[RMDB]
The record gives the reactivity of an RNA of 177 nucleotides to 2A3. Reactivities are given for positions 27 through 126.

RNA sequence: GGGAACGACUCGAGUAGAGUCGAAAACAUGACGAAUAAACUGUUCUUCUUCGUAUUCUUUUUCACCUUCCCCUGAUUUGGGAGGCGAUUCGUCGUAAGAGCAAGAAUACGAAGACGAACAAAAAAGAAGCUUGCCAAAAUUCGUUUUGGCAAGCUUAAAAGAAACAACAACAACAAC
Reactivity to 2A3 in 0.01 (KOAc 150mM, MgCl2 10mM, bicine 150mM(pH8.5), 24C), signal-to-noise 2, nucleotides 027 to 126: c060a130u260g070a010c050g100a090a100u300a160a150a060c090u070g030u000u000c020u000u000c000u000u000c000g000u000a010u000u000c010u000u020u000u040u050c000a020c080c000u110u130c120c000c000c040u110g130a130u160u050u160g010g000g000a020g010g000c000g020a020u070u110c060g020u010c010g010u100a180a070g000a000g100c000a000a000g010a000a000u000a000c000g000a000a000g000a000c000g000a000a000c000a000a020a000a000a000a000g090